Chemical mapping of a 177-nucleotide RNA with 2A3 and DMS.
The reactions ran in a buffer of 150 mM KOAc, 10 mM MgCl2 and 150 mM bicine (pH 8.5), at 24 C.
The 2A3 profile rests on 6,859 reads.

[RMDB]
RNA sequence: GGGAACGACUCGAGUAGAGUCGAAAAUGAGACAUUGUGGGAUACAGUUUGCAAAUACAAGUGUGAUGCUGGCUUUGGGUUCGCUGGCUUUGGGUUCAUUAGAAGUGUGAAUGCAUCAAAGAUAAGCGUAGCGAAAAAUUUUCGAAUUUUUCGCUACAAAAGAAACAACAACAACAAC
Reactivity to 2A3 in 0.01 (KOAc 150mM, MgCl2 10mM, bicine 150mM(pH8.5), 24C), signal-to-noise 7, nucleotides 027 to 126: u200g030a020g030a020c070a080u060u110g030u070g070g020g000a030u050a090c040a070g050u070u110u110g050c030a030a080a030u140a110c050a120a120g050u030g030u020g080a060u100g010c030u020g030g060c040u090u060u060g080g010g000u070u060c040g010c060u030g000g000c000u030u020u020g030g010g000u020u020c020a030u030u100a070g100a290a050g070u050g020u030g140a070a020u060g040c020a020u040c050a110a070a050g090a060u100a110a040g060c070
Reactivity to DMS in 0.01 (KOAc 150mM, MgCl2 10mM, bicine 150mM(pH8.5), 24C), signal-to-noise 5, nucleotides 027 to 126: u030g000a080g000a090c080a090u020u040g010u010g000g020g000a080u010a080c110a070g010u020u020u030g030c080a070a030a110u020a100c160a070a080g010u010g020u010g020a080u010g020c040u020g000g010c050u000u010u010g000g010g000u010u010c110g000c060u000g000g010c040u010u010u010g010g010g020u010u010c020a030u000u020a080g010a090a130g010u010g020u000g000a040a060u010g000c050a070u010c050a040a060a080g000a110u030a080a090g020c250